[RMDB]
RNA sequence: GGGAACGACUCGAGUAGAGUCGAAAAACCAGCUUGAGCUCUGCAUCAUCUCACCACCCGACGCAUCGCCAACUGUCUUGCACUGAUUGGUUGGCGCCUUUCUCAGUCACCAUCUAGACAGUAGUAAGAUACCGCAUACGUUCGCGUAUGCGGUAUCAAAAGAAACAACAACAACAAC
Reactivity to DMS in 0.01 (KOAc 150mM, MgCl2 10mM, bicine 150mM(pH8.5), 24C), signal-to-noise 3, nucleotides 027 to 126: a110c040c010a120g010c110u010u000g020a130g030c050u000c050u000g000c040a100u000c040a040u000c020u020c050a090c070c060a060c060c020c010g000a080c110g010c070a110u000c040g000c010c020a060a020c020u000g010u000c010u010u000g030c160a100c080u010g010a020u000u010g040g000u000u010g000g010c040g000c110c020u000u000u000c050u010c070a090g010u000c030a050c090c040a060u010c080u000a100g000a070c100a060g020u000a080g000u000a100a080
Reactivity to 2A3 in 0.01 (KOAc 150mM, MgCl2 10mM, bicine 150mM(pH8.5), 24C), signal-to-noise 2, nucleotides 027 to 126: a010c000c000a010g030c000u040u030g060a020g000c040u030c010u090g040c000a070u040c010a030u050c040u000c020a030c040c010a010c000c030c010g000a040c020g030c060a070u100c030g030c040c000a010a020c000u010g000u020c040u020u190g050c090a090c160u070g020a080u050u160g020g050u010u020g000g000c010g000c010c010u060u080u030c020u010c030a000g030u000c010a010c030c000a060u000c010u060a030g030a090c030a040g060u090a010g030u060a110a010
An RNA of 177 nucleotides, treated with DMS and 2A3 and read out base by base. The 2A3 profile rests on 2,280 reads. DMS adducts were read by reverse transcription with MarathonRT.